An RNA of 207 nucleotides, treated with 2A3 and read out base by base.

RNA sequence: GGGAACGACUCGAGUAGAGUCGAAAAAGACGGAAACCCAUCGACUGUCACCAGAUGCUGCAUCACCUUAUCACUGAUGGCUCAACGGUAUCCGGCGGUACAACUGAAUACUUGUAGCUGCCUUUUGAAAAGGAGUUCAUCUUCGGAUGAACUCCAACCUGCAAUUCUGGUUCGCCAGAAUUGCAGGAAAAGAAACAACAACAACAAC
Reactivity to 2A3 in 0.01 (KOAc 150mM, MgCl2 10mM, bicine 150mM(pH8.5), 24C), signal-to-noise 1, nucleotides 027 to 156: a000g020a010c040g060g040a090a140a020c020c010c000a010u040c050g100a100c050u070g050u100c030a020c050c000a050g050a130u020g040c060u060g020c010a000u020c000a060c000c000u110u040a020u100c050a020c050u100g020a070u090g020g010c010u020c100a120a020c050g070g000u040a070u020c070c070g010g000c020g000g010u030a050c020a040a020c040u140g020a170a000u200a230c020u040u000g000u010a050g080c010u020g000c020c000u120u130u140u180g100a080a010a010a010g060g000a010g000u000u000c000a000u030c000u060u070c110g040g000a020u000g000a000a000c000u000c000c000a000a000
It was measured as part of the RMDB library M2RFPK. 2A3 adducts were read by reverse transcription with SuperScript II with manganese.